[RMDB]
RNA sequence: GGGAACGACUCGAGUAGAGUCGAAAAAGCACGGUUUUUGAGGACGCAUUUUGUCGGUGCGGUAAUGCCCUCCUUUACACUUUCUCGCAUGGUGCGGGAGUGUGGAGAGGAAACAAAAGCUAGUCUCGAUAGGCGGUUAACUUCGGUUAACCGCCAACAUGCGUAAAUGGUUCGCCAUUUACGCAUGAAAAGAAACAACAACAACAAC
Reactivity to 2A3 in 0.01 (KOAc 150mM, MgCl2 10mM, bicine 150mM(pH8.5), 24C), signal-to-noise 5, nucleotides 027 to 156: a000g090c040a030c040g020g010u030u030u010u030u050g090a080g020g020a020c020g010c050a080u030u020u040u110g110u090c080g000g030u030g000c020g010g040u140a070a040u120g040c000c000c000u020c020c010u020u040u040a010c010a000c000u120u150u040c020u020c010g020c040a100u260g250g040u300g130c000g010g000g000a000g000u000g010u010g010g000a030g000a010g010g030a030a050a000c020a000a020a000a010g030c020u080a050g020u000c010u000c080g060a100u120a160g000g000c000g000g000u010u010a010a000c000u020u050c100g010g000u000u000a000a000c000c010g010c000c000a000a000
Reactivity to DMS in 0.01 (KOAc 150mM, MgCl2 10mM, bicine 150mM(pH8.5), 24C), signal-to-noise 2, nucleotides 027 to 156: a090g000c060a100c040g020g000u000u000u000u000u000g010a160g020g020a080c030g040c040a080u010u010u000u000g020u010c130g000g040u000g000c020g000g020u010a100a070u010g000c010c000c000u000c020c020u010u010u000a050c010a020c000u000u000u010c020u020c010g020c010a300u000g030g030u000g020c000g020g000g010a020g020u000g000u000g000g000a010g000a060g010g020a040a050a090c040a020a100a070a160g000c010u000a290g030u000c020u000c020g000a150u000a140g020g030c010g020g040u000u000a010a020c010u000u010c300g030g020u000u010a000a000c000c000g020c000c000a000a000